[RMDB]
RNA sequence: GGGAACGACUCGAGUAGAGUCGAAAAGUGAACCGGCUCGCCCGGGGAGCGGAGGGGGGCCGCAGUGAAGAGGCCCAAGCGACUGUUUACCAAAAACACAGGACUCUGCAUAAGCCGCGAGGCGACGAGCGGCUUUGCCCUUCGGGGCAAAGCCGCUAAAAGAAACAACAACAACAAC
Reactivity to 2A3 in 0.01 (KOAc 150mM, MgCl2 10mM, bicine 150mM(pH8.5), 24C), signal-to-noise 1, nucleotides 027 to 126: g080u050g050a060a110c000c000g000g000c000u000c030g060c000c000c000g070g020g020g010a040g000c020g010g000a020g000g040g000g000g000g000c020c030g010c070a150g000u250g160a180a080g000a140g040g000c000c000c070a000a070g070c020g050a020c040u010g060u030u060u120a190c080c130a110a040a000a080a000c030a000c000a030g010g020a050c000u000c000u020g000c020a070u070a190a100g040c020c000g120c000g050a140g010g000c040g000a040c050g040